[RMDB]
RNA sequence: GGGAACGACUCGAGUAGAGUCGAAAAUCUGGGAUUGAUAACCUGUAUUCCAUUGAGUUCAAUUCUGAAACACAGGGGGUGUUUGAGAUGGAUGGGAAUUGACUAGGCAGCAUGAUAUGGGUUGCCCUGCUUGUAUAGGGUUCGCCCUAUACAAGCAAAAAGAAACAACAACAACAAC
Reactivity to DMS in 0.01 (KOAc 150mM, MgCl2 10mM, bicine 150mM(pH8.5), 24C), signal-to-noise 3, nucleotides 027 to 126: u010c040u000g010g010g010a140u010u000g000a140u010a080a090c020c010u010g010u000a070u000u000c120c050a100u010u010g020a100g000u010u000c050a040a060u000u000c040u010g000a070a030a040c050a030c060a130g020g010g010g010g030u000g010u000u010u000g000a120g000a090u000g000g000a100u020g000g000g010a030a040u000u000g010a060c100u000a090g010g000c130a060g020c100a050u010g000a080u000a050u000g010g010g000u000u000g000c000c010c070
Reactivity to 2A3 in 0.01 (KOAc 150mM, MgCl2 10mM, bicine 150mM(pH8.5), 24C), signal-to-noise 1, nucleotides 027 to 126: u070c050u030g010g030g000a030u080u170g070a020u110a170a080c000c010u000g020u020a030u110u080c140c020a010u020u130g100a030g070u070u110c000a000a040u060u000c020u080g050a090a040a010c120a020c040a110g110g010g040g100g000u040g030u040u080u040g060a120g000a070u120g100g000a040u070g060g000g020a010a030u080u000g040a040c050u020a040g130g000c020a000g020c030a050u060g000a020u070a040u060g060g000g000u000u010g000c000c010c020